[RMDB]
RNA sequence: GGGAACGACUCGAGUAGAGUCGAAAACGCUGAAAGACGGGGACCGUGACACACUGGCUUCGACGCUGCACAUGGCGCGCGCGUCAGUGAUCCAGGAACUGGCUACCAUCUCCACCGAGAGUGCCGCAGAACAAUAGAGGUUCGCCUCUAUUGUUCUAAAAGAAACAACAACAACAAC
Reactivity to DMS in 0.01 (KOAc 150mM, MgCl2 10mM, bicine 150mM(pH8.5), 24C), signal-to-noise 7, nucleotides 027 to 126: c110g030c070u000g010a080a070a090g010a080c050g010g000g010g000a090c040c050g010u010g010a110c110a130c060a070c020u000g000g010c040u010u010c030g020a090c030g010c020u020g030c070a150c150a130u010g010g000c050g000c050g010c040g010c300g010u000c010a030g020u000g000a050u000c030c010a070g010g010a190a060c100u000g000g000c000u000a060c040c040a060u000c020u000c020c030a050c120c060g000a070g010a140g010u000g000c020c030g030c190
Reactivity to 2A3 in 0.01 (KOAc 150mM, MgCl2 10mM, bicine 150mM(pH8.5), 24C), signal-to-noise 6, nucleotides 027 to 126: c030g020c040u090g050a150a080a000g070a030c020g010g030g010g030a020c020c030g070u070g040a010c050a010c000a000c130u010g000g010c000u170u140c070g120a140c020g020c070u190g020c060a110c030a260u240g210g000c020g000c020g020c000g000c010g040u010c010a010g000u010g030a030u000c010c000a030g040g020a050a050c040u060g020g000c010u050a080c010c020a050u030c020u020c020c020a110c040c030g080a090g000a010g080u060g050c000c040g050c070